Conditions: 150 mM KOAc, 10 mM MgCl2 and 150 mM bicine (pH 8.5), 24 C. The record gives the reactivity of an RNA of 177 nucleotides to DMS and 2A3.
RNA sequence: GGGAACGACUCGAGUAGAGUCGAAAAGAUAUGGAGCCACUGCACGCAGCGAAGAACAGGUUCGGAAACGAACCUGGGAGCUGGUGUUGGCUCCUAAGUCAAAGAUGCAUAGUUCGCUAUGCAUCAACUAGCUAUUCCAGUUCGCUGGAAUAGCUAGAAAAGAAACAACAACAACAAC
Reactivity to DMS in 0.01 (KOAc 150mM, MgCl2 10mM, bicine 150mM(pH8.5), 24C), signal-to-noise 3, nucleotides 027 to 126: g030a020u010a300u010g000g000a020g020c000c020a090c300u020g030c060a030c080g050c110a000g030c030g080a100a140g000a140a180c010a000g010g020u010u000c000g010g000a070a040a150c000g020a000a000c000c000u000g020g000g000a060g000c000u000g020g000u000g020u000u010g000g000c000u000c000c000u010a010a070g000u000c030a130a130a150g010a010u000g010c000a030u000a000g010u000u000c270g010c000u000a000u010g000c010a000u000c000a030a120
Reactivity to 2A3 in 0.01 (KOAc 150mM, MgCl2 10mM, bicine 150mM(pH8.5), 24C), signal-to-noise 2, nucleotides 027 to 126: g040a000u040a020u160g000g010a000g000c000c020a080c220u160g040c080a020c260g300c090a020g040c010g280a300a020g000a090a020c000a000g000g020u000u000c020g040g000a040a070a050c030g000a010a000c030c020u010g010g000g020a020g000c020u060g060g060u030g020u050u050g000g000c000u000c010c000u010a010a000g000u020c050a000a000a300g020a000u000g000c000a000u010a000g030u050u090c300g020c170u000a010u010g020c000a000u010c000a000a010
For DMS, 2,222 sequencing reads were counted.
The 2A3 profile rests on 4,658 reads.